RNA sequence: GGGAACGACUCGAGUAGAGUCGAAAAUGUACUCAAACCUUAGCACAACCCUGAACAGGUACUAAUCAAGUCUUAGGUUCAGGACUUGAGAUAGGUUAUAAAUUUGGUACUACUGGUGAUUAUAGGAGACUCAUGGACUAUUCGUAGUCCAUGAGUCAAAAGAAACAACAACAACAAC
Reactivity to DMS in 0.01 (KOAc 150mM, MgCl2 10mM, bicine 150mM(pH8.5), 24C), signal-to-noise 2, nucleotides 027 to 126: u010g010u010a010c030u000c160a040a090a080c020c020u000u000a090g030c110a110c080a050a120c100c010c000u010g010a080a080c100a110g020g010u010a050c020u010a100a190u020c180a070a050g000u000c030u000u010a100g020g020u000u000c090a010g000g000a030c150u000u010g000a050g000a080u000a010g000g010u000u010a110u000a050a050a120u000u010u000g010g000u000a040c010u000a140c070u010g000g050u000g000a140u000u000a150u000a050g000g000a210
Reactivity to 2A3 in 0.01 (KOAc 150mM, MgCl2 10mM, bicine 150mM(pH8.5), 24C), signal-to-noise 1, nucleotides 027 to 126: u060g010u000a010c010u020c230a000a060a000c020c010u040u080a060g060c060a050c010a040a020c000c000c010u000g000a030a000c000a060g080g030u120a000c010u090a040a120u110c050a140a040g050u000c000u060u200a110g140g000u020u060c030a020g000g030a010c020u010u010g010a020g000a050u120a030g060g000u020u000a080u000a060a120a000u080u060u100g010g000u000a030c030u000a020c010u060g050g030u080g220a160u080u300a150u280a150g000g140a100